Record summary: Chemical mapping of a 177-nucleotide RNA with DMS and 2A3. The data come from the RNA Mapping Database (RMDB), library OK2TRN. As a SHAPE reagent, 2A3 marks flexible, mostly unpaired nucleotides at the ribose 2'-OH.
RNA sequence: GGGAACGACUCGAGUAGAGUCGAAAAAUGCUAUCCGCAAUCUUAUCCGGGGCGAUUGCCUUUGAGGACUUUAUCACUGUCAAGAUGUACCUGUCACUAACUGGAAUCCGGAAAUACAUCCUCAAGACUAUUAGAACGUGUUCGCACGUUCUAAUAGAAAAGAAACAACAACAACAAC
Reactivity to DMS in 0.01 (KOAc 150mM, MgCl2 10mM, bicine 150mM(pH8.5), 24C), signal-to-noise 6, nucleotides 027 to 126: a070u010g000c050u000a090u020c040c070g010c050a080a060u010c060u000u010a100u000c060c030g000g020g010g020c130g000a070u000u000g010c020c070u000u000u010g010a110g000g010a070c110u000u010u000a060u010c080a060c070u010g010u010c100a080a070g010a070u000g010u000a070c060c020u000g010u000c070a090c110u000a060a110c070u000g000g000a080a070u000c050c010g010g000a040a070a070u010a070c150a070u000c020c020u000c070a070a070g010a250
Reactivity to 2A3 in 0.01 (KOAc 150mM, MgCl2 10mM, bicine 150mM(pH8.5), 24C), signal-to-noise 6, nucleotides 027 to 126: a000u080g010c010u030a070u100c030c010g030c050a040a080u020c030u110u150a060u060c030c020g020g010g010g000c040g110a120u060u230g040c010c010u050u040u110g030a050g000g050a020c010u120u140u070a110u100c040a020c080u070g070u100c060a050a050g010a110u060g040u080a080c010c000u020g010u080c040a040c140u090a180a030c020u040g030g030a020a030u030c020c010g010g020a010a060a010u080a020c020a030u050c000c020u050c030a050a040g070a120